[RMDB]
RNA sequence: GGGAACGACUCGAGUAGAGUCGAAAAGGCAGGCUUCGGCCGUCCGGCGCGCGAUUAACGACCAACUUAGAACUGGUACGGACAAGGGGAAUCUGACUGUCUAAUUAAAACAUAGCAUUGCGAUGGCGGGGAUAUUCUCUUUCGAGAGAAUAUCCCCAAAAGAAACAACAACAACAAC
Reactivity to 2A3 in 0.01 (KOAc 150mM, MgCl2 10mM, bicine 150mM(pH8.5), 24C), signal-to-noise 1, nucleotides 027 to 126: g000g000c060a010g000g000c010u050u000c010g090g000c000c000g000u000c000c000g000g000c000g000c000g010c020g080a100u170u000a020a070c020g000a020c000c000a000a010c050u280u230a040g050a130a000c110u100g020g000u090a130c040g000g030a060c000a090a120g000g010g020g000a010a160u020c000u030g020a030c000u000g100u100c000u000a000a110u240u230a020a060a100a000c000a000u030a020g090c000a010u020u160g000c010g020a030u110g010g000c070
Reactivity to DMS in 0.01 (KOAc 150mM, MgCl2 10mM, bicine 150mM(pH8.5), 24C), signal-to-noise 1, nucleotides 027 to 126: g010g000c040a070g000g030c000u000u060c090g000g060c000c000g020u000c030c010g020g010c000g000c020g020c140g030a130u030u000a070a090c040g000a160c010c000a000a140c070u000u100a080g030a230a120c180u000g000g000u000a050c060g040g000a170c170a000a080g000g030g050g000a060a010u000c070u000g000a190c020u040g000u000c080u000a190a210u000u000a140a110a060a050c100a200u000a110g040c130a130u000u070g000c060g030a060u000g000g000c290